Conditions: 150 mM KOAc, 10 mM MgCl2 and 150 mM bicine (pH 8.5), 24 C. An RNA of 177 nucleotides, treated with DMS and 2A3 and read out base by base.
RNA sequence: GGGAACGACUCGAGUAGAGUCGAAAAGGGUGUUGCUUUAAUUAUCCUGACACUUACAUUCCAUUUACCACUUUGGGUCUUACUCAUCGCAUUCUUCUUAAAUGUGUGUCCUGUGACGUCAAUUGGAACGAGGAUUGCUAUUCGUAGCAAUCCUCGUAAAAGAAACAACAACAACAAC
Reactivity to DMS in 0.01 (KOAc 150mM, MgCl2 10mM, bicine 150mM(pH8.5), 24C), signal-to-noise 2, nucleotides 027 to 126: g000g020g020u000g000u000u010g000c060u000u000u010a100a130u010u010a060u010c030c030u000g000a040c060a020c020u010u010a060c150a120u000u000c040c020a120u000u000u000a120c050c040a090c130u000u000u010g000g000g000u010c060u000u000a110c060u000c040a050u000c040g000c040a040u000u010c070u010u010c100u000u000a090a040a070u000g010u010g020u000g000u000c040c070u000g000u020g000a060c110g000u000c070a050a140u000u010g000g000a120
Reactivity to 2A3 in 0.01 (KOAc 150mM, MgCl2 10mM, bicine 150mM(pH8.5), 24C), signal-to-noise 2, nucleotides 027 to 126: g130g000g000u020g000u000u050g000c080u140u100u140a050a040u140u220a040u130c000c000u010g030a020c010a010c090u010u110a020c000a080u010u000c010c000a030u110u100u060a070c020c020a050c040u050u070u050g040g020g010u000c000u000u060a060c020u030c030a080u090c020g040c060a030u060u020c030u120u050c010u070u180a150a200a160u040g010u000g030u040g020u000c000c000u100g040u090g080a080c050g000u050c040a030a080u060u060g030g000a010

It was measured as part of the RMDB library OK2TRN. Reactivities are rounded to 0.1 and cut off at 0 and 3. Values cover nucleotides 27 to 126. DMS adducts were read by reverse transcription with MarathonRT.